[RMDB]
RNA sequence: GGGAACGACUCGAGUAGAGUCGAAAAGACGUGGAGGUUCCGCGCCCUCCUUUGCGCGUAAGUACGUCGAAAUUCGGUGCUUGGGAUCGCACCGUUAGAUCCAUUUGAUAUCCGCUUAGUGCCGCGGUUGGGCAUUUACACUUACCCGAAAGGGGAACAUAGGUGGGAUGUUCGCAUCCCACCUAUGAAAAGAAACAACAACAACAAC
Reactivity to 2A3 in 0.01 (KOAc 150mM, MgCl2 10mM, bicine 150mM(pH8.5), 24C), signal-to-noise 4, nucleotides 027 to 156: g050a010c030g010u070g030g070a070g020g090u130u110c050c000g010c010g000c020c010c010u130c010c060u090u070u160g040c050g000c020g010u050a080a100g050u050a040c060g010u020c030g040a000a030a060u130u060c010g000g010u000g000c000u050u100g080g070g010a050u080c040g000c020a000c000c010g000u010u040a010g000a060u020c030c020a100u090u060u120g140a120u090a050u090c040c050g000c060u020u070a020g040u070g080c060c020g040c050g050g000u100u080g020g000g020c020a020u050u070u140a030c060a010c020u050u120a040c020c000c010g020a070a030a000g000g010g010g000a030a020
Reactivity to DMS in 0.01 (KOAc 150mM, MgCl2 10mM, bicine 150mM(pH8.5), 24C), signal-to-noise 2, nucleotides 027 to 156: g030a050c050g050u010g000g010a100g080g000u010u010c040c070g010c010g020c120c050c040u010c050c040u010u000u040g020c000g010c040g010u010a070a130g030u000a040c030g000u000c000g010a020a080a180u000u010c070g010g020u000g000c000u010u000g020g030g010a150u020c170g000c000a080c020c010g040u000u010a070g010a110u010c030c030a220u010u000u020g030a170u000a100u000c020c000g010c050u010u000a050g000u000g020c020c030g040c030g050g030u000u000g000g010g010c020a070u000u000u000a070c060a060c050u010u000a200c000c000c010g000a070a070a180g010g020g020g010a040a160
Record summary: This 207-nucleotide RNA was probed chemically with 2A3 and DMS. For 2A3, 2,537 sequencing reads were counted. It was measured as part of the RMDB library OK3TST. Reactivities are given for positions 27 through 156.